Chemical mapping of a 177-nucleotide RNA with DMS. The RNA was probed in 150 mM KOAc, 10 mM MgCl2 and 150 mM bicine (pH 8.5) at 24 C.

[RMDB]
RNA sequence: GGGAACGACUCGAGUAGAGUCGAAAAAUAAAUAGUGCGUGGACGCACCCACGCAUUCAUGGGUAGGCAGUUGUUCGCAUUAGUACAGCUUAGCCUGUACUAAGCGAACAACAAGUACAACAAAAAAUCCCAUAAACAGGUUCGCCUGUUUAUGGGAAAAAGAAACAACAACAACAAC
Reactivity to DMS in 0.01 (KOAc 150mM, MgCl2 10mM, bicine 150mM(pH8.5), 24C), signal-to-noise 2, nucleotides 027 to 126: a060u000a040a080a050u010a040g020u000g010c000g010u000g010g010a150c170g010c290a120c130c010c000a020c000g010c020a010u000u000c160a080u010g000g000g010u010a100g000g020c170a130g010u000u000g010u000u000c000g000c000a160u000u000a010g000u000a000c000a010g010c010u010u010a090g030c230c010u010g000u010a000c000u000a000a000g010c000g000a000a020c000a000a000c000a000a070g000u000a060c120a020a070c100a020a030a150a070a050a080